[RMDB]
RNA sequence: GGGAACGACUCGAGUAGAGUCGAAAAGAAAGUAGCGAUGCAUGAGUGCAUCAGGCUCAUGCCACCUGAUGCUAAUGGAUUCCACCAUGUACGGAAUCCCAGUACGUGGAAAAGCUACGAAAAGAAAGGGAUAUCCUUUGUUCGCAAAGGAUAUCCCAAAAGAAACAACAACAACAAC
Reactivity to 2A3 in 0.01 (KOAc 150mM, MgCl2 10mM, bicine 150mM(pH8.5), 24C), signal-to-noise 3, nucleotides 027 to 126: g160a000a100a020g000u000a000g020c000g030a010u010g050c020a010u030g060a040g300u190g000c020a040u010c020a000g020g000c010u030c110a090u200g050c050c010a010c020c000u010g020a020u000g000c000u020a010a010u020g010g040a010u000u030c000c000a020c010c040a030u080g010u070a000c020g000g030a100a110u030c010c000c010a010g010u010a000c000g020u020g000g040a000a100a000a000g000c000u000a000c040g030a110a000a000a000g150a040a030a050
Reactivity to DMS in 0.01 (KOAc 150mM, MgCl2 10mM, bicine 150mM(pH8.5), 24C), signal-to-noise 2, nucleotides 027 to 126: g020a110a140a050g000u000a010g000c030g000a070u000g000c040a050u000g070a090g000u060g000c010a080u010c120a060g000g000c140u010c100a100u000g000c000c130a300c000c000u000g010a050u000g000c030u000a060a000u020g000g000a040u000u000c110c030a210c090c110a010u000g020u010a010c070g000g040a020a270u020c010c000c070a090g020u000a010c010g050u070g000g030a060a000a080a060g020c020u020a000c000g000a060a030a040a090g010a030a130a150
Chemical mapping of a 177-nucleotide RNA with 2A3 and DMS.
High DMS reactivity at an A or C suggests that its Watson-Crick edge is free.
The reactions ran in a buffer of 150 mM KOAc, 10 mM MgCl2 and 150 mM bicine (pH 8.5), at 24 C.